[RMDB]
RNA sequence: GGGAACGACUCGAGUAGAGUCGAAAAUUUGGAGAGCACUCCGGGCCGAAGGGUUGAGUAGCAUCCAGAGCGAGGAACCCACACGGAGUAGAACAGAGAAAUCACCUCCAGAGGACCCCUUAAGCGAGUAUAGUACUGUCUUCGGACAGUACUAUACAAAAGAAACAACAACAACAAC
Reactivity to 2A3 in 0.01 (KOAc 150mM, MgCl2 10mM, bicine 150mM(pH8.5), 24C), signal-to-noise 1, nucleotides 027 to 126: u020u020u000g030g000a020g000a000g080c030a020c010u020c000c000g060g080g020c130c080g120a140a080g010g040g000u040u070g060a100g100u040a030g040c000a010u100c100c120a110g070a090g160c060g010a060g040g020a000a000c000c070c000a040c000a020c000g020g000a020g000u090a070g020a120a060c070a040g050a000g000a100a080a050u020c020a000c000c000u000c000c010a010g000a030g000g000a050c000c000c000c070u120u170a140a050g140c080g020a050
Reactivity to DMS in 0.01 (KOAc 150mM, MgCl2 10mM, bicine 150mM(pH8.5), 24C), signal-to-noise 2, nucleotides 027 to 126: u000u030u010g010g010a000g020a240g060c090a040c010u000c000c070g000g010g000c220c130g030a190a090g000g020g030u000u010g060a040g030u020a090g000c020a100u020c130c270a190g010a110g000c060g000a150g000g000a040a060c010c010c000a110c070a040c060g000g010a000g000u000a070g000a170a060c070a120g000a090g000a030a090a140u000c050a300c130c030u000c000c010a010g000a050g000g000a210c090c010c010c240u010u010a050a160g020c060g000a110
Source: RMDB library VIROID, as collected in RNAgym.
This 177-nucleotide RNA was probed chemically with 2A3 and DMS.
For 2A3 the reverse transcriptase was SuperScript II with manganese.
For DMS the reverse transcriptase was MarathonRT.